This 177-nucleotide RNA was probed chemically with 2A3. The RNA was probed in 150 mM KOAc, 10 mM MgCl2 and 150 mM bicine (pH 8.5) at 24 C. Source: RMDB library OK1LIB, as collected in RNAgym.
RNA sequence: GGGAACGACUCGAGUAGAGUCGAAAAGAAAGUGUGCACUUGAUACCGCGUGACUUCGGUCACGUAGUGGCAACGCGCAGGACUUUGCUGCGACUCCUUAGUCCUGCGGUAUCUUGUGCUCACGAAACCCUCCGACGAGGUUCGCCUCGUCGGAGGGAAAAGAAACAACAACAACAAC
Reactivity to 2A3 in 0.01 (KOAc 150mM, MgCl2 10mM, bicine 150mM(pH8.5), 24C), signal-to-noise 1, nucleotides 027 to 126: g160a010a040a010g030u000g000u000g000c010a030c020u000u010g000a000u000a010c000c000g040c000g080u010g020a000c000u000u060c190g100g000u010c010a000c080g010u040a020g000u010g000g040c050a090a060c030g000c030g010c100a050g020g030a090c000u030u020u000g010c030u120g000c030g070a110c020u040c000c000u010u000a000g010u000c010c000u000g020c000g000g010u000a000u000c000u000u000g000u010g020c000u040c000a000c000g000a080a000a000